[RMDB]
RNA sequence: GGGAACGACUCGAGUAGAGUCGAAAACUCCACGGUCAGGCCCACGACCAGGGGCGCCACGGCGACGUCGGAAUCGCCGCUGCGUGCCGACAGUAACGCCAGAAGCUCGAUGCCUUCGGACGGACACCGUUCACUGAACCUUCGGGUUCAGUGAACGAAAAGAAACAACAACAACAAC
Reactivity to DMS in 0.01 (KOAc 150mM, MgCl2 10mM, bicine 150mM(pH8.5), 24C), signal-to-noise 2, nucleotides 027 to 126: c120u000c040c070a220c220g000g000u000c040a190g000g000c020c030c000a140c150g000a070c050c060a190g050g000g020g010c050g010c010c070a080c040g000g000c040g110a030c030g000u010c170g000g020a160a130u000c000g010c010c080g030c130u000g000c090g080u040g000c020c000g000a080c090a090g000u000a020a150c080g010c010c000a070g000a090a070g000c000u000c140g010a110u000g000c030c000u000u000c000g000g010a070c000g030g000a080c040a070c100
Reactivity to 2A3 in 0.01 (KOAc 150mM, MgCl2 10mM, bicine 150mM(pH8.5), 24C), signal-to-noise 1, nucleotides 027 to 126: c050u000c020c040a030c090g030g020u040c050a040g070g060c030c020c060a020c040g030a020c040c030a030g070g050g000g000c050g000c010c010a010c000g000g050c020g020a000c020g030u150c080g090g050a090a060u070c000g000c010c020g070c050u070g020c050g030u050g140c000c000g050a010c010a000g090u060a180a020c030g000c060c000a040g030a070a010g000c030u050c100g100a080u120g050c020c000u000u000c000g120g000a060c020g010g030a020c060a020c090